Notes: Chemical mapping of a 177-nucleotide RNA with DMS. Reactivities are rounded to 0.1 and cut off at 0 and 3. The DMS profile rests on 666 reads. For DMS the reverse transcriptase was MarathonRT.

[RMDB]
RNA sequence: GGGAACGACUCGAGUAGAGUCGAAAAGCACAUCAGAAUGAGGGGGGGCUUAAAAUAACUUCAGGCCUAUUGCAUGGAAGGAAGAUUUUUGGUCAGCAGCAGAUACAAAUUCCCUGGAAUUCUGGUAGUCUGGGUAGUUAUUCGUAACUACCCAGACAAAAGAAACAACAACAACAAC
Reactivity to DMS in 0.01 (KOAc 150mM, MgCl2 10mM, bicine 150mM(pH8.5), 24C), signal-to-noise 1, nucleotides 027 to 126: g010c120a090c170a030u010c030a020g000a060a040u000g000a300g020g000g020g030g020g010g000c050u020u030a020a030a030a000u020a070a120c030u000u000c020a070g010g000c020c100u000a060u000u000g020c190a050u000g010g000a050a050g030g000a070a090g020a130u000u000u000u000u010g000g000u010c000a130g000c090a040g000c070a050g000a040u000a090c140a070a050a090u020u020c000c000c000u020g000g000a100a100u010u000c010u020g010g050u010a160